[RMDB]
RNA sequence: GGGAACGACUCGAGUAGAGUCGAAAAACACGGGGGCCCAGUGGAGCCAUGGGAUGCUCCUCCCGAUUCCGUCCAACCCCUUCCCCCGAGGGUCGCCCAGGAAUGGCGGGACCCACUCGACUGGGGUCAACCAUGAAGUUCGCUUCAUGGAAAAGAAACAACAACAACAAC
Reactivity to DMS in 0.01 (KOAc 150mM, MgCl2 10mM, bicine 150mM(pH8.5), 24C), signal-to-noise 9, nucleotides 027 to 129: a050c150a070c100g010g000g000g000g020c040c010c020a020g040u030g020g030a030g020c100c090a160u050g000g010g000a210u070g010c080u010c060c000u010c070c030c010g020a110u020u020c040c040g030u000c060c100a090a140c040c000c010c030u000u010c000c000c000c000c010g030a080g010g070g020u030c060g020c020c010c020a090g020g050a100a080u020g020g030c080g010g010g000a000c020c000c010a030c040u000c060g020a060c080u010g000g000g000g000u010c090a080a130
Reactivity to 2A3 in 0.01 (KOAc 150mM, MgCl2 10mM, bicine 150mM(pH8.5), 24C), signal-to-noise 9, nucleotides 027 to 129: a000c100a030c030g010g000g000g030g040c000c000c000a010g020u030g050g020a010g020c060c090a230u150g040g030g020a060u150g050c030u040c020c000u020c010c000c000g020a030u060u020c020c020g050u060c060c030a070a100c020c000c000c000u030u090c020c010c000c000c000g020a050g000g000g020u040c080g090c030c010c010a040g040g090a110a080u080g080g030c030g010g010g010a020c000c000c000a050c020u040c020g100a040c040u040g000g000g000g030u040c020a040a060